[RMDB]
RNA sequence: GGGAACGACUCGAGUAGAGUCGAAAACUCAAUCACUACGGUGAUUGAGAAUGCUUACGCCUCAAUCAAGCUUGAAUGGAGUGCCUCGAGCAGAUAUAGACUGAAACAUUUAGUAUGGUCAAGCAGGGAGCAACAGCUCGAGUACGCUCGAGCUGAAGUGGAUAUUACCCUUCGGGGUAAUAUCCACAAAAGAAACAACAACAACAAC
Reactivity to 2A3 in 0.01 (KOAc 150mM, MgCl2 10mM, bicine 150mM(pH8.5), 24C), signal-to-noise 1, nucleotides 027 to 156: c000u000c000a000a020u000c000a000c000u020a030c140g090g000u000g000a000u000u000g000a000g050a110a020u010g020c000u020u080a050c130g030c020c000u050c050a090a130u080c050a120a110g010c020u000u080g100a110a090u070g070g010a050g040u020g030c000c050u040c080g000a000g000c110a000g050a060u050a030u160a110g040a000c060u030g090a090a090a000c010a030u000u000u070a090g030u070a030u160g060g000u110c000a000a000g000c040a020g060g040g000a060g020c020a010a070c000a000g000c000u000c000g000a010g020u080a050c210g030c030u000c000g000a000g000c000u000g010a050a000